[RMDB]
Chemical mapping of a 177-nucleotide RNA with 2A3 and DMS. For 2A3, 6,910 sequencing reads were counted. The RNA was probed in 150 mM KOAc, 10 mM MgCl2 and 150 mM bicine (pH 8.5) at 24 C.
RNA sequence: GGGAACGACUCGAGUAGAGUCGAAAAUGGGAAUAACGCCAAGAUCACCGAGAGUCUGUUAAAAAGGUUUAUUCCCGAAGUGUGGCACCCCCCGGACGACGUGGCCGCGCGGCUCCGGGCCGCAGGGGCCAGGGCUGUUUUUCGAAACAGCCCUGGCAAAAGAAACAACAACAACAAC
Reactivity to 2A3 in 0.01 (KOAc 150mM, MgCl2 10mM, bicine 150mM(pH8.5), 24C), signal-to-noise 7, nucleotides 027 to 126: u090g010g010g020a020a010u030a040a020c100g020c020c010a060a020g030a050u090c050a060c180c100g060a070g010a020g230u030c060u080g150u200u190a080a090a040a050a040g010g000u020u010u010a010u010u010c000c000c000g000a040a030g050u090g010u060g050g000c030a040c000c000c000c000c000c010g000g020a020c070g020a020c050g040u050g050g080c050c030g030c020g000c010g040g000c010u010c030c020g030g030g000c000c010g010c010a020g050g030g070
Reactivity to DMS in 0.01 (KOAc 150mM, MgCl2 10mM, bicine 150mM(pH8.5), 24C), signal-to-noise 5, nucleotides 027 to 126: u070g000g000g000a030a010u010a010a020c210g020c010c010a090a040g010a070u000c070a120c110c050g000a130g010a170g010u000c010u010g010u030u040a040a090a060a130a100g010g000u010u000u000a020u000u000c000c000c000g000a060a090g010u000g020u010g010g000c060a090c020c030c010c020c030c060g000g010a060c110g010a050c060g010u020g010g010c020c050g010c080g010c010g000g000c020u000c070c060g000g010g010c040c010g000c050a060g000g010g000